[RMDB]
RNA sequence: GGGAACGACUCGAGUAGAGUCGAAAACCAGUGAUUUCGAUCACUGGAAAAAAACCUUUGUGCUAGUGGAGCUCAACAUAAAGAGUGUGCCCAUUGGGCACAUGUCGAGCGUUGAAACUAGCACUCUGGUAAAAAGUCUCGACUUCGGUCGAGACAACGCUUAUAAGUAAUUCGUUACUUAUAAGCGAAAAGAAACAACAACAACAAC
Reactivity to 2A3 in 0.01 (KOAc 150mM, MgCl2 10mM, bicine 150mM(pH8.5), 24C), signal-to-noise 4, nucleotides 027 to 156: c000c000a000g000u000g000a000u090u100u250c250g120a020u010c010a000c010u000g000g000a170a050a050a000a000a020a070c010c000u010u010u010g000u000g000c000u000a010g010u020g000g030a010g030c000u030c010a030a140c060a210u290a160a170a050g080a070g030u020g010u010g000c000c030c110a300u110u300g000g000g010c010a000c010a010u050g110u060c110g010a010g000c020g100u160u030g010a010a010a000c000u000a000g000c000a000c000u000c000u000g000g010u080a050a050a060a030a050g010u000c010u000c000g010a010c000u050u090c300g060g010u000c000g000a000g000a000c000a000a000
Reactivity to DMS in 0.01 (KOAc 150mM, MgCl2 10mM, bicine 150mM(pH8.5), 24C), signal-to-noise 1, nucleotides 027 to 156: c000c000a010g020u010g010a010u000u000u010c160g060a090u000c000a010c000u040g010g010a020a030a040a070a040a040a010c000c000u040u000u000g020u010g000c000u000a010g010u000g020g020a300g000c000u000c000a030a040c040a230u000a070a100a270g000a240g030u000g010u010g040c020c010c020a300u020u010g070g000g000c000a010c010a000u000g040u000c010g010a020g000c010g020u000u000g010a210a160a010c010u010a000g000c000a000c010u000c010u000g000g030u010a010a060a020a110a060g000u000c010u000c000g010a010c010u000u010c300g060g020u000c010g000a020g000a000c000a010a070
This 207-nucleotide RNA was probed chemically with 2A3 and DMS. For DMS the reverse transcriptase was MarathonRT. The 2A3 profile rests on 3,173 reads.